[RMDB]
RNA sequence: GGGAACGACUCGAGUAGAGUCGAAAAUGUGUAAUUUUUGUGUGUUCUACAUAGUCAUGUUAAUUUUCAUAGCCCUUUGAAGAUUAGAUGAGUUUAGUUUUGCCAUUUUUGCAGUCACUGAUGAAUCACACAUAUUGAAUGACACCCAUGUAUGGCAGUCCGAUUUAUCAUUCGUGAUAAAUCGGACAAAAGAAACAACAACAACAAC
Reactivity to DMS in 0.01 (KOAc 150mM, MgCl2 10mM, bicine 150mM(pH8.5), 24C), signal-to-noise 2, nucleotides 027 to 156: u010g050u010g000u000a000a000u010u000u000u010u020g030u010g010u010g030u000u010c040u010a030c050a060u000a090g020u010c030a050u010g020u000u000a010a010u000u000u010u020c000a010u000a120g050c140c160c170u000u010u010g020a030a040g030a000u000u000a060g020a040u000g010a090g030u000u000u020a110g020u000u000u010u010g050c020c040a160u000u000u000u000u000g030c040a060g000u000c020a060c040u000g010a110u010g000a050a050u010c010a030c020a050c040a040u000a160u000u010g010a070a090u000g010a140c090a080c020c020c040a160u000g000u010a070u020g030g010c090a160
Reactivity to 2A3 in 0.01 (KOAc 150mM, MgCl2 10mM, bicine 150mM(pH8.5), 24C), signal-to-noise 2, nucleotides 027 to 156: u180g040u040g050u070a010a160u020u040u030u150u000g020u010g020u000g000u050u000c030u080a080c060a100u170a030g130u030c000a000u010g030u080u050a030a020u020u050u020u040c030a010u050a040g100c010c010c000u050u070u020g000a010a020g000a030u040u010a000g030a060u040g030a030g070u060u080u110a000g010u000u030u160u050g030c040c010a100u030u050u070u090u220g010c040a010g030u070c070a040c060u040g040a030u080g030a100a010u140c030a010c000a000c010a020u050a070u050u060g100a060a040u090g000a000c000a040c030c000c070a030u100g040u090a110u020g080g000c020a000